[RMDB]
RNA sequence: GGGAACGACUCGAGUAGAGUCGAAAAAAGAGGUUUACGAGAGGGAAAAUCAGCUAAGUUGCAUAGACCAUACCUCAAAUCCAGGUGUAAAUUCUUCAAGGUUUGUGCUACAAAUUGAGGAGAGGGACCUAACAUGAAACUUCGGUUUCAUGUUAGGAAAAGAAACAACAACAACAAC
Reactivity to 2A3 in 0.01 (KOAc 150mM, MgCl2 10mM, bicine 150mM(pH8.5), 24C), signal-to-noise 2, nucleotides 027 to 126: a000a000g090a030g030g000u120u140u110a030c110g000a010g010a010g110g000g010a040a060a010a090u090c000a020g010c040u100a210a020g060u060u050g040c000a010u020a040g020a010c010c000a030u050a040c000c010u000c000a020a040a040u070c050c030a030g000g000u000g010u050a080a190a140u190u050c090u130u160c160a070a060g000g000u000u020u020g030u010g010c010u020a020c010a010a060a050u060u120g030a030g020g040a050g000a020g040g020g020a010
Reactivity to DMS in 0.01 (KOAc 150mM, MgCl2 10mM, bicine 150mM(pH8.5), 24C), signal-to-noise 4, nucleotides 027 to 126: a080a110g000a040g000g020u010u000u010a090c120g010a120g000a090g000g000g000a100a070a110a090u010c090a050g020c090u000a070a130g010u010u000g000c040a040u000a030g010a070c020c020a050u010a100c020c010u000c080a030a080a090u000c110c170a070g010g020u010g010u010a060a080a100u000u010c090u010u000c170a070a170g000g000u000u000u000g020u000g020c070u000a040c060a050a050a100u000u010g000a190g010g010a100g000a050g020g000g020a120
An RNA of 177 nucleotides, treated with 2A3 and DMS and read out base by base. High 2A3 reactivity points to a flexible backbone, as in loops and unpaired stretches. It was measured as part of the RMDB library OK2TRN. The RNA was probed in 150 mM KOAc, 10 mM MgCl2 and 150 mM bicine (pH 8.5) at 24 C.